[RMDB]
RNA sequence: GGGAACGACUCGAGUAGAGUCGAAAAUCACACGUGUGUGGGGGCUCUCCCUGUGGUGCAGCUGGUACAGCGGCCCCUGGAGUUGAGGAUCCAAGCAGGCUGAGGUCUGGGUUUGCCGGAGGGCCCUCGGUGGCUGGUCUUUGUCCUGCUCCCACUAUCGAUAUCAUCAGUUCGCUGAUGAUAUCGAAAAAGAAACAACAACAACAAC
Reactivity to 2A3 in 0.01 (KOAc 150mM, MgCl2 10mM, bicine 150mM(pH8.5), 24C), signal-to-noise 1, nucleotides 027 to 156: u060c010a000c020a020c160g130u100g040u030g000u010g120g000g000g000g030c030u010c000u000c020c000c020u040g120u180g020g070u260g040c070a210g000c060u110g010g300u300a190c070a040g020c000g000g000c000c000c000c000u000g000g030a050g020u130u300g150a090g000g060a040u080c050c010a030a000g040c010a020g040g000c000u030g020a020g070g060u030c030u080g290g000g050u140u160u190g060c000c000g080g090a010g020g010g070c000c000c000u000c020g050g010u020g030g050c000u020g000g040u050c060u120u100u160g050u120c030c020u010g000c000u030c000c000c000a020c040u040a040